[RMDB]
RNA sequence: GGGAACGACUCGAGUAGAGUCGAAAAGGCGGCAUCACUGAGCUCUCGGCGCCAUGGUGGCAGUAUGAGCUAUGGCGGCAGUGGAGAGCAGGCAGCCGACCUGCCCGGACUCCAGCCGCAACGCAAUAUUACCAAUCCACUUCGGUGGAUUGGUAAUAAAAGAAACAACAACAACAAC
Reactivity to DMS in 0.01 (KOAc 150mM, MgCl2 10mM, bicine 150mM(pH8.5), 24C), signal-to-noise 2, nucleotides 027 to 126: g000g000c010g000g020c000a070u040c160a260c020u040g010a030g030c050u050c020u010c010g000g000c020g000c010c020a000u010g000g000u000g010g000c010a300g070u000a060u000g020a300g010c000u000a000u000g000g000c000g000g010c020a030g000u070g000g020a000g000a050g000c020a070g010g000c300a130g000c000c030g000a080c050c000u000g010c020c000c000g000g000a040c070u000c040c060a050g020c010c080g000c090a110a020c030g000c140a090a060u000
Reactivity to 2A3 in 0.01 (KOAc 150mM, MgCl2 10mM, bicine 150mM(pH8.5), 24C), signal-to-noise 2, nucleotides 027 to 126: g000g000c000g000g010c000a030u070c030a070c060u020g020a030g030c010u000c000u000c040g030g000c010g000c010c000a020u000g060g000u060g080g080c040a050g090u300a230u240g120a040g000c000u010a000u010g000g060c010g000g000c010a090g050u100g160g050a000g000a000g020c000a010g000g000c030a010g000c010c000g120a170c000c000u030g010c000c000c000g040g020a010c020u000c020c000a000g010c020c020g090c020a050a010c020g000c070a040a020u000